Conditions: 150 mM KOAc, 10 mM MgCl2 and 150 mM bicine (pH 8.5), 24 C.
This 207-nucleotide RNA was probed chemically with DMS and 2A3.
For DMS, 2,698 sequencing reads were counted.

[RMDB]
RNA sequence: GGGAACGACUCGAGUAGAGUCGAAAAACAAGAUUUCUGAGACAAACACGCUUCACAAUGUGCGGCAAAGAAACAUUGUUUAUGCAAAGGCACUUCGCAAUGUGUGCUCAAACAUUGCUUAUUCAAAAAAAGAUUUUAGACUUCGGUCUAAAAUCAACAGUAUAGAGAUCUUCGGAUCUCUAUACUGAAAAGAAACAACAACAACAAC
Reactivity to DMS in 0.01 (KOAc 150mM, MgCl2 10mM, bicine 150mM(pH8.5), 24C), signal-to-noise 2, nucleotides 027 to 156: a020c010a050a150g020a210u000u000u020c010u010g000a300g000a240c010a070a190a110c040a000c010g000c030u000u020c180a160c120a080a060u000g030u000g010c140g030g000c020a030a210a030g040a030a000a060c040a100u000u000g020u000u010u000a080u030g010c030a010a100a220g000g030c020a020c010u000u010c140g010c130a060a080u010g020u000g040u000g000c010u000c050a130a100a050c000a050u000u000g010c000u010u000a040u000u020c030a010a000a030a120a180a170a170g010a020u000u000u010u000a010g010a020c010u010u030c300g080g040u000c000u000a000a010a010a010u020c000a020a100
Reactivity to 2A3 in 0.01 (KOAc 150mM, MgCl2 10mM, bicine 150mM(pH8.5), 24C), signal-to-noise 6, nucleotides 027 to 156: a000c040a040a060g050a130u060u130u120c070u160g090a070g040a100c090a040a180a010c060a010c040g010c000u010u030c010a000c000a030a040u030g000u000g010c000g020g030c070a120a110a060g060a030a050a000c000a010u000u000g050u050u080u110a130u120g070c070a080a090a070g150g000c000a000c020u020u020c020g000c010a000a010u000g000u000g020u010g020c060u120c200a040a050a000c000a010u000u000g000c000u050u090a160u140u150c100a070a080a020a020a030a000a030g010a000u000u010u010u000a000g000a000c000u020u030c260g080g000u000c000u000a000a000a000a010u010c000a000a000
It was measured as part of the RMDB library M2RFPK. Values cover nucleotides 27 to 156.